[RMDB]
RNA sequence: GGGAACGACUCGAGUAGAGUCGAAAAAGUUCGGAGCGAACUCGGUCGCCGUACUGGUCGCGCGCCUGGUCGGUGCCGAGCUGGUCCGGGAUCGUCCGGUAGGCAAGCAGCGUGACCGGCACCGACGGUGCGCCCUCCUGUUCGCAGGAGGGCGCACAAAAGAAACAACAACAACAAC
Reactivity to DMS in 0.01 (KOAc 150mM, MgCl2 10mM, bicine 150mM(pH8.5), 24C), signal-to-noise 3, nucleotides 027 to 126: a090g020u010u010c020g020g000a130g020c050g010a040a060c030u010c050g000g000u010c000g010c080c050g020u010a020c080u010g010g010u010c050g010c050g010c110g030c030c010u000g010g010u000c020g000g010u000g000c010c010g000a150g030c010u020g000g000u040c000c020g000g000g000a130u060c290g000u010c000c030g000g000u000a110g000g020c140a160a150g000c010a050g020c020g020u070g010a190c170c000g000g000c000a000c010c000g010a000c010g000
Reactivity to 2A3 in 0.01 (KOAc 150mM, MgCl2 10mM, bicine 150mM(pH8.5), 24C), signal-to-noise 2, nucleotides 027 to 126: a000g100u100u080c060g040g020a100g050c050g020a040a030c030u030c120g050g010u040c030g020c130c030g040u110a050c030u070g010g040u060c030g000c000g000c000g030c050c010u040g040g010u010c000g000g000u020g020c000c000g000a010g000c010u020g000g090u020c010c000g010g000g020a180u160c100g160u080c030c000g020g040u080a080g070g100c110a060a110g010c020a020g020c040g080u090g100a080c040c000g000g010c010a000c000c000g000a000c020g010

Structure probing data (DMS and 2A3) for a 177-nucleotide construct. The RNA was probed in 150 mM KOAc, 10 mM MgCl2 and 150 mM bicine (pH 8.5) at 24 C. DMS adducts were read by reverse transcription with MarathonRT.